The data come from the RNA Mapping Database (RMDB), library OK2TST. Chemical mapping of a 177-nucleotide RNA with DMS and 2A3. The RNA was probed in 150 mM KOAc, 10 mM MgCl2 and 150 mM bicine (pH 8.5) at 24 C.
[RMDB]
RNA sequence: GGGAACGACUCGAGUAGAGUCGAAAACGCCAGAAACUUCUACAACCUCAAGUAUGUGGCCUUGGUGCUGGCUUUCAGCAUUAACUUCAUGCUGCUCUUCUACAAAGUCACCUCGUUUACCGAAGAAGCUAAAUUUUAUCUUCGGAUAAAAUUUAGCAAAAGAAACAACAACAACAAC
Reactivity to DMS in 0.01 (KOAc 150mM, MgCl2 10mM, bicine 150mM(pH8.5), 24C), signal-to-noise 3, nucleotides 027 to 126: c130g020c040c040a080g000a090a060a080c080u000u020c050u000a090c080a070a060c060c050u000c100a120a110g010u010a050u000g010u000g020g010c170c130u000u000g000g040u000g020c000u000g020g000c140u000u010u010c010a030g010c020a030u000u010a070a080c090u010u000c110a050u000g020c020u000g010c090u000c040u010u000c030u000a050c060a060a060a100g010u000c020a070c040c040u010c040g000u000u010u000a120c020c010g000a090a090g010a100a150
Reactivity to 2A3 in 0.01 (KOAc 150mM, MgCl2 10mM, bicine 150mM(pH8.5), 24C), signal-to-noise 2, nucleotides 027 to 126: c030g030c030c000a000g050a080a080a020c020u090u000c020u090a070c050a070a040c000c040u090c060a050a030g030u060a110u190g040u040g030g000c040c030u040u070g020g030u030g010c030u010g010g000c000u020u100u070c010a000g010c010a010u060u090a100a060c050u120u100c050a020u050g020c010u030g000c020u050c010u080u050c020u040a130c000a080a120a010g020u020c010a030c040c000u010c010g030u020u090u050a170c020c020g110a100a030g030a060a000